Structure probing data (2A3 and DMS) for a 207-nucleotide construct. For 2A3 the reverse transcriptase was SuperScript II with manganese. Source: RMDB library OK3TST, as collected in RNAgym. The DMS profile rests on 5,638 reads. DMS adducts were read by reverse transcription with MarathonRT.
RNA sequence: GGGAACGACUCGAGUAGAGUCGAAAAUAAUCAACAGAAAACAAGUUUAAUGCAACAGGUGACAACGGUCUGGAGCGAGUCCAUGCUCCGGAAGGCUCAGUCUGUGGCAGUCCCGUGGCUCAAGACAGGCUGAGGCCGGCUGCAAUGGAGGCCAGCAAGGUAUUACUAUGUUCGCAUAGUAAUACCUAAAAGAAACAACAACAACAAC
Reactivity to 2A3 in 0.01 (KOAc 150mM, MgCl2 10mM, bicine 150mM(pH8.5), 24C), signal-to-noise 4, nucleotides 027 to 156: u110a010a050u080c040a020a100c050a080g140a080a110a030a040c090a060a060g040u100u150u150a130a060u150g040c050a070a030c040a090g030g030u050g050a050c050a140a080c090g030g050u020c010u030g010g000a020g040c050g030a020g050u000c040c020a030u080g000c000u000c020c000g000g020a030a040g090g010c000u010c010a000g010u000c000u000g010u020g050g010c070a010g020u040c050c040c080g080u210g030g000c010u010c100a040a010g080a030c010a010g000g000c000u000g000a000g030g030c000c000g020g000c070u030g000c000a010a060u020g030g000a020g000g050c030c010a010g030c060a050
Reactivity to DMS in 0.01 (KOAc 150mM, MgCl2 10mM, bicine 150mM(pH8.5), 24C), signal-to-noise 3, nucleotides 027 to 156: u000a090a130u000c040a080a110c040a150g000a110a090a100a100c050a060a090g010u000u000u000a090a170u000g030c010a060a070c030a070g010g050u000g020a080c040a060a090c030g030g040u000c010u000g020g010a040g050c010g010a160g030u010c090c060a100u000g010c000u010c020c020g000g020a040a060g000g000c010u020c010a050g010u000c010u000g010u000g020g000c100a080g010u010c000c030c140g000u010g010g000c000u000c060a080a290g010a080c030a020g000g010c010u000g000a030g030g030c020c020g020g010c040u010g000c040a080a100u000g000g020a090g020g020c030c000a070g020c060a130